Structure probing data (2A3 and DMS) for a 177-nucleotide construct. The 2A3 profile rests on 1,709 reads. It was measured as part of the RMDB library RFMREP. The reactions ran in a buffer of 150 mM KOAc, 10 mM MgCl2 and 150 mM bicine (pH 8.5), at 24 C.
RNA sequence: GGGAACGACUCGAGUAGAGUCGAAAAGGGGAAGGUGUGAGGAAAGUAACAAACAGCAGCGGAGUUUUAAACUUUAAAUAGACAGGUCUGAGUGCCUGAAUUUGCCUUUUCAUUUUACUUCAUCCUCGUAGUAUACUAGCUUCGGCUAGUAUACUACAAAAGAAACAACAACAACAAC
Reactivity to 2A3 in 0.01 (KOAc 150mM, MgCl2 10mM, bicine 150mM(pH8.5), 24C), signal-to-noise 2, nucleotides 027 to 126: g030g010g000g010a020a020g010g000u030g000u040g020a040g000g060a060a060a040g030u070a040a040c060a070a140a000c020a040g060c010a010g010c040g070g020a030g030u040u050u040u140a060a030a000c000u030u080u070a060a110a050u060a060g050a040c030a000g000g000u010c080u260g210a060g130u170g000c000c000u000g010a010a010u070u030u080g020c010c000u040u090u070u100c020a030u040u050u040u110a090c010u060u050c020a070u030c030c020u040c070
Reactivity to DMS in 0.01 (KOAc 150mM, MgCl2 10mM, bicine 150mM(pH8.5), 24C), signal-to-noise 3, nucleotides 027 to 126: g020g010g010g010a080a020g020g010u000g010u020g000a070g000g030a070a030a030g010u020a060a100c190a060a090a100c080a090g010c070a030g010c110g020g000a060g000u010u010u000u010a070a070a100c040u000u010u000a030a040a090u000a080g010a210c050a020g000g010u000c020u020g010a130g000u010g000c020c000u000g010a060a090u000u010u010g000c030c010u000u000u000u010c070a070u010u000u000u000a080c040u000u010c050a100u000c000c000u000c290